[RMDB]
RNA sequence: GGGAACGACUCGAGUAGAGUCGAAAAGACGUAAUCCGCGCAAAUCCACAAACGCCAACGAUGAGCGUUUCGCUGUAGCCGCUUAAGGCAACAGCCGGGGCCGCCCGAGCCCUGUUACCAAAGACGGGAAACUCGAUGCCAUUCGUGGCAUCGAGAAUGGUUAUUGGUAUUUCGAUACCAAUAACCAAAAAGAAACAACAACAACAAC
Reactivity to 2A3 in 0.01 (KOAc 150mM, MgCl2 10mM, bicine 150mM(pH8.5), 24C), signal-to-noise 4, nucleotides 027 to 156: g050a010c010g020u040a060a120u060c070c040g020c010g010c070a040a060a100u060c050c040a080c080a120a050a010c040g010c010c030a120a050c140g160a210u160g030a060g040c020g000u020u060u110c050g000c000u010g000u020a060g000c010c010g090c150u200u240a130a100g000g000c010a030a000c000a020g000c010c000g000g000g000g000c000c030g010c010c000c000g000a000g000c000c000c000u000g040u040u090a020c020c020a000a000a010g210a090c010g000g000g020a020a010a020c000u000c000g010a000u000g000c000c000a020u060u060c190g090u110g000g000c000a000u000c000g010a010g000a000a030
Reactivity to DMS in 0.01 (KOAc 150mM, MgCl2 10mM, bicine 150mM(pH8.5), 24C), signal-to-noise 2, nucleotides 027 to 156: g010a070c040g030u010a110a080u000c070c020g000c070g060c000a040a060a050u000c060c040a030c060a030a260a030c000g020c010c010a080a180c090g020a130u000g010a140g020c050g000u010u000u000c060g030c000u010g060u000a060g060c010c000g020c250u010u010a090a190g020g040c000a070a040c000a030g020c010c080g020g000g020g000c040c070g000c020c030c010g000a210g000c010c010c020u010g000u000u000a100c120c060a050a080a070g000a080c040g010g010g000a050a110a140c010u000c000g010a000u000g000c020c000a090u000u000c250g040u010g000g010c010a000u000c000g000a000g000a010a050